[RMDB]
RNA sequence: GGGAACGACUCGAGUAGAGUCGAAAAAGUGGAGCCAUGGGAUGCUCCUCCCGAUUCCGUCCAUCCCCACCCCCUGAGGGUCGCCCAGGAAUGGCGGGACCCCACUCGACAGGGUCCGCGUACCAUCGAAGACAAGAUAGUUCGCUAUCUUGUCUUCAAAAGAAACAACAACAACAAC
Reactivity to 2A3 in 0.01 (KOAc 150mM, MgCl2 10mM, bicine 150mM(pH8.5), 24C), signal-to-noise 3, nucleotides 027 to 126: a000g090u110g000g020a010g040c050c060a140u100g050g040g010a060u120g030c010u030c000c000u010c010c000c010g010a050u150u040c050c060g030u030c020c010a080u070c040c020c000c000a060c010c010c010c010c010u040g050a160g030g010g010u010c030g020c010c000c000a010g040g110a100a050u040g070g000c040g020g010g010a020c000c010c000c010a080c050u120c040g110a070c040a050g010g000g000u000c010c010g110c010g010u050a090c000c000a030u060c090
Reactivity to DMS in 0.01 (KOAc 150mM, MgCl2 10mM, bicine 150mM(pH8.5), 24C), signal-to-noise 4, nucleotides 027 to 126: a110g010u000g000g010a040g030c030c100a120u020g010g020g000a240u010g010c020u000c020c000u000c010c000c020g000a120u000u000c050c030g000u000c020c020a080u000c020c010c000c030a300c040c010c010c010c010u000g010a100g010g000g010u000c020g000c010c010c010a130g010g020a120a040u010g020g000c030g010g000g000a040c010c010c010c040a100c140u000c140g010a090c150a150g000g010g000u000c000c020g010c040g010u000a090c010c020a070u000c140
Overview
This 177-nucleotide RNA was probed chemically with 2A3 and DMS. The DMS profile rests on 4,665 reads. 2A3 adducts were read by reverse transcription with SuperScript II with manganese.